[RMDB]
RNA sequence: GGGAACGACUCGAGUAGAGUCGAAAACUGUCGUUCUUCGGAACGACAGAAAGAACGCGUGGGUCACGGAAGGAGGAGCGUGUGGGACGCGACAAACCCAAAAAAGCGUUCGGUUCGCCGAACGCAAGUCGAACAAUAGGUUCGCCUAUUGUUCGACAAAAGAAACAACAACAACAAC
Reactivity to 2A3 in 0.01 (KOAc 150mM, MgCl2 10mM, bicine 150mM(pH8.5), 24C), signal-to-noise 2, nucleotides 027 to 126: c000u010g000u000c000g020u010u010c010u020u040c180g110g000a000a000c000g000a000c000a010g000a010a000a000g030a060a020c020g010c010g020u030g050g100g070u080c020a010c040g060g050a090a060g080g060a040g010g050a050g080c020g000u030g000u030g050g070g040a020c000g000c000g030a020c060a030a060a070c000c000c000a100a100a010a010a010a010g000c000g020u000u010c000g000g000u030u040c170g020c030c000g010a000a000c000g010c000a000a010
Reactivity to DMS in 0.01 (KOAc 150mM, MgCl2 10mM, bicine 150mM(pH8.5), 24C), signal-to-noise 3, nucleotides 027 to 126: c000u020g000u010c000g030u000u000c000u000u000c220g020g010a000a010c000g010a010c000a000g010a040a070a040g010a100a070c050g010c020g010u010g020g010g000u000c050a070c050g000g000a090a090g010g000a070g000g010a080g000c030g040u010g010u000g010g010g010a060c040g000c040g010a070c080a050a120a110c010c000c000a000a030a090a100a080a080g000c000g010u000u000c010g000g020u000u010c220g030c000c010g020a010a020c000g010c000a010a010
Source: RMDB library M2PK50, as collected in RNAgym. Chemical mapping of a 177-nucleotide RNA with 2A3 and DMS. The RNA was probed in 150 mM KOAc, 10 mM MgCl2 and 150 mM bicine (pH 8.5) at 24 C. For 2A3 the reverse transcriptase was SuperScript II with manganese. In probing experiments dimethyl sulfate is read out at A N1 and C N3, which are open when not base-paired.